[RMDB]
An RNA of 177 nucleotides, treated with DMS and read out base by base. DMS (dimethyl sulfate) methylates the pairing face of unpaired adenines and cytosines. Conditions: 150 mM KOAc, 10 mM MgCl2 and 150 mM bicine (pH 8.5), 24 C. For DMS, 760 sequencing reads were counted. Source: RMDB library OK2TRN, as collected in RNAgym.
RNA sequence: GGGAACGACUCGAGUAGAGUCGAAAAUCUGGCUCAGGGAAGUAAGUAUCCAUUGCAUGGAGAAGAUCGGCGAUAGGUUGCGUAGCUUCUGGAUCAUCAAUUGCAGACAUCGCCUUAAAGGCAGAACAACGGUCUACGAGUUCGCUCGUAGACCGUUAAAAGAAACAACAACAACAAC
Reactivity to DMS in 0.01 (KOAc 150mM, MgCl2 10mM, bicine 150mM(pH8.5), 24C), signal-to-noise 1, nucleotides 027 to 126: u000c020u010g000g000c040u010c090a070g020g020g000a010a170g000u030a050a110g000u000a090u000c070c020a090u010u010g000c050a300u020g010g000a020g010a090a240g000a130u000c050g010g020c010g020a020u000a070g060g000u000u010g010c110g010u000a080g000c080u000u010c040u000g040g010a060u030c070a100u020c070a080a080u010u000g040c010a020g000a100c150a070u020c090g010c030c010u000u010a050a050a070g000g030c030a050g000a090a070c180